[RMDB]
RNA sequence: GGGAACGACUCGAGUAGAGUCGAAAAACAGUCGCGUAUGUCGCGGAUGAAACGGAACUUCCAUACGACGAAAAUGGUAUCACACCAGAUGUCAUUAUUAAUUCUACAUCCAUCUUCUCUAGAAAAACUAUAUCUAUGUUGAUAGAGGUUAUUUUAAAAGCUACACUGAAUUCGUUCAGUGUAGCUUAAAAGAAACAACAACAACAAC
Reactivity to 2A3 in 0.01 (KOAc 150mM, MgCl2 10mM, bicine 150mM(pH8.5), 24C), signal-to-noise 2, nucleotides 027 to 156: a010c050a030g100u050c020g020c000g000u060a110u060g090u100c070g030c000g160g010a050u040g040a040a060a040c070g030g030a030a010c030u070u000c010c010a010u020a040c100g030a010c010g000a130a270a040a000u020g000g030u010a000u030c010a020c000a010c150c040a030g000a020u090g010u030c020a030u010u070a030u010u070a130a060u040u120c070u030a060c030a080u050c030c000a040u000c040u110u020c040u040c030u030a010g130a040a120a010a040a030c000u090a070u030a140u240c100u070a130u110g010u030u040g050a090u030a090g060a030g030g080u080u000a090u000u050u020u090a120a260
Reactivity to DMS in 0.01 (KOAc 150mM, MgCl2 10mM, bicine 150mM(pH8.5), 24C), signal-to-noise 2, nucleotides 027 to 156: a140c000a160g020u000c040g020c010g010u020a090u000g030u010c030g000c020g010g000a100u010g010a110a070a170c090g030g010a040a170c060u010u000c040c030a160u000a120c020g050a060c030g000a050a100a060a060u000g030g020u010a070u000c070a140c100a150c110c060a130g010a030u000g010u010c040a040u010u020a150u000u000a050a090u000u000c020u010a070c020a070u000c010c020a040u000c080u000u000c020u000c020u000a060g020a060a070a050a060a050c040u000a060u000a150u000c050u000a100u020g010u000u010g000a110u000a040g010a070g000g010u000u000a100u000u020u000u000a030a160